About this RNA: An RNA of 177 nucleotides, treated with 2A3 and DMS and read out base by base. The RNA was probed in 150 mM KOAc, 10 mM MgCl2 and 150 mM bicine (pH 8.5) at 24 C. Source: RMDB library OK2TST, as collected in RNAgym.

RNA sequence: GGGAACGACUCGAGUAGAGUCGAAAACGCUGGCGCUGACAGGCCAUGAACUGUCACCGACGCGCAUAUGACCGCGCCCGUUGACCAGCGGAGAUUCCAGCACAAAACGUCGGCCAAUCAGCUGCUACGCCUAUAGGUGAUUCGUCACCUAUAGGCGAAAAGAAACAACAACAACAAC
Reactivity to 2A3 in 0.01 (KOAc 150mM, MgCl2 10mM, bicine 150mM(pH8.5), 24C), signal-to-noise 2, nucleotides 027 to 126: c020g020c020u030g000g000c030g000c050u010g020a000c010a030g060g040c080c020a130u120g080a120a040c010u020g000u010c000a020c000c030g060a050c010g000c010g010c030a000u080a230u300g150a080c100c080g000c010g030c020c030c010g030u060u150g060a140c010c020a000g000c040g030g000a020g020a020u070u030c000c000a020g030c060a040c060a080a090a040a000c030g080u080c050g040g040c020c010a050a100u030c050a070g000c020u070g000c010u110a070
Reactivity to DMS in 0.01 (KOAc 150mM, MgCl2 10mM, bicine 150mM(pH8.5), 24C), signal-to-noise 2, nucleotides 027 to 126: c020g000c020u000g000g000c000g030c090u000g000a020c050a080g000g010c010c210a190u010g030a100a080c020u000g010u010c010a070c090c070g010a060c160g000c000g010c110a080u000a150u030g020a140c160c050g010c030g020c010c050c120g000u000u020g010a050c040c050a060g020c020g060g010a100g010a170u000u000c000c010a100g060c080a060c090a080a040a110a070c120g000u000c000g030g010c000c050a050a060u040c060a080g030c050u000g000c110u010a070